Conditions: 150 mM KOAc, 10 mM MgCl2 and 150 mM bicine (pH 8.5), 24 C. Chemical mapping of a 177-nucleotide RNA with DMS and 2A3. The data come from the RNA Mapping Database (RMDB), library OK1LIB. For DMS the reverse transcriptase was MarathonRT.
[RMDB]
RNA sequence: GGGAACGACUCGAGUAGAGUCGAAAAAGUGCAAUGGAAAUCAAUAUUGCGCGGCACUCCUCCCAGUAGGAAGCUUCUGGCGGCAGCGUCUCAACGAGCUCAGGCCUUUGUCAACGGGCACGUACCGAGAUUUGGUAUGGUUCGCCAUACCAAAUCUAAAAGAAACAACAACAACAAC
Reactivity to DMS in 0.01 (KOAc 150mM, MgCl2 10mM, bicine 150mM(pH8.5), 24C), signal-to-noise 3, nucleotides 027 to 126: a070g070u000g000c040a020a020u000g010g000a070a070a160u000c220a100a090u030a110u000u000g000c000g020c290g010g000c070a110c030u000c030c040u000c050c010c050a020g000u010a030g000g010a090a100g000c110u000u000c040u000g000g000c100g040g020c110a080g020c050g000u010c010u010c070a080a050c060g000a100g000c020u030c020a230g000g000c000c100u020u020u000g000u010c110a080a080c120g000g010g010c020a050c030g010u020a130c040c100g000
Reactivity to 2A3 in 0.01 (KOAc 150mM, MgCl2 10mM, bicine 150mM(pH8.5), 24C), signal-to-noise 4, nucleotides 027 to 126: a000g030u020g020c020a020a030u050g040g150a290a020a040u190c070a080a090u130a060u130u040g000c020g000c010g010g000c050a010c070u030c000c020u050c000c000c000a000g010u020a040g030g080a100a010g050c020u040u020c050u120g020g000c010g020g000c030a010g040c000g040u000c010u010c030a050a130c030g020a000g010c000u000c060a010g050g030c000c010u080u090u100g120u060c030a040a040c080g000g000g000c020a010c050g050u100a040c010c030g040